This 177-nucleotide RNA was probed chemically with 2A3 and DMS. The 2A3 profile rests on 1,211 reads. For DMS the reverse transcriptase was MarathonRT. For 2A3 the reverse transcriptase was SuperScript II with manganese. Reactivities are given for positions 27 through 126. The RNA was probed in 150 mM KOAc, 10 mM MgCl2 and 150 mM bicine (pH 8.5) at 24 C.
RNA sequence: GGGAACGACUCGAGUAGAGUCGAAAAGAUAUGGAUUCUCCGAUAAGCUGGUAUCGGAAACGAUACCCAGCUUUUGACGGAGGUCCUAAGUCAAAGAGUUCUGUGAUCUUCGGAUCACAGAACUCAAUCUUGUCUUCUUCUUCGGAAGAAGACAAGAAAAAGAAACAACAACAACAAC
Reactivity to 2A3 in 0.01 (KOAc 150mM, MgCl2 10mM, bicine 150mM(pH8.5), 24C), signal-to-noise 1, nucleotides 027 to 126: g020a000u100a090u160g040g000a120u300u260c010u020c000c010g130a150u040a180a020g030c000u000g010g010u020a000u010c020g000g080a070a050a020c010g000a000u010a000c000c060c000a020g050c000u000u050u000u100g080a060c020g000g030a000g000g010u000c000c000u020a030a050g040u010c070a100a070a120g000a010g000u000u020c000u040g040u000g010a030u010c040u040u230c300g070g000a000u000c000a000c000a000g000a000a000c000u010c010a000a000
Reactivity to DMS in 0.01 (KOAc 150mM, MgCl2 10mM, bicine 150mM(pH8.5), 24C), signal-to-noise 1, nucleotides 027 to 126: g000a060u000a300u010g010g010a010u010u000c010u010c000c000g000a170u000a020a010g020c030u010g000g000u000a000u000c000g000g000a100a050a090c010g000a000u000a010c120c070c000a040g000c000u000u000u000u000g020a190c120g010g000a030g010g000u000c000c000u000a030a080g020u000c030a120a120a140g000a010g010u000u000c000u000g030u010g040a000u000c000u000u040c210g020g000a040u000c000a010c000a010g000a000a000c000u010c000a010a040